[RMDB]
RNA sequence: GGGAACGACUCGAGUAGAGUCGAAAAGAUAUGGAUCCACUGGCUGACGAAGUAUAAGGGUCGGAAACGACCCAUAUCGAAGCCUGUGGAUCCUAAGUCAAAAGUAAGUGCCUUCGGGCACUUACAAGACAAGAGGACAGUUCGCUGUCCUCUUGUCAAAAGAAACAACAACAACAAC
Reactivity to DMS in 0.01 (KOAc 150mM, MgCl2 10mM, bicine 150mM(pH8.5), 24C), signal-to-noise 2, nucleotides 027 to 126: g000a050u000a190u000g000g000a000u000c000c000a010c000u000g010g010c020u000g020a270c200g010a070a190g010u000a050u010a110a100g010g000g030u010c010g020g000a020a080a120c000g010a000c000c000c010a020u000a010u010c000g000a300a040g020c000c000u000g010u000g000g010a000u000c000c000u000a000a050g000u010c010a110a100a200a080g000u000a000a000g000u000g020c000c010u010u000c300g020g000g010c010a000c000u000u000a000c000a070a120
Reactivity to 2A3 in 0.01 (KOAc 150mM, MgCl2 10mM, bicine 150mM(pH8.5), 24C), signal-to-noise 1, nucleotides 027 to 126: g000a000u040a010u060g010g000a000u020c000c000a000c030u010g010g030c000u010g070a300c070g090a090a030g040u080a050u090a300a300g000g000g000u000c000g010g000a020a020a000c010g000a000c000c070c030a000u000a000u020c020g060a020a000g000c000c000u010g000u010g000g010a000u000c000c000u000a010a000g000u000c020a050a050a100a050g000u010a000a000g010u000g010c010c000u010u160c300g040g020g000c000a000c000u000u010a000c000a010a000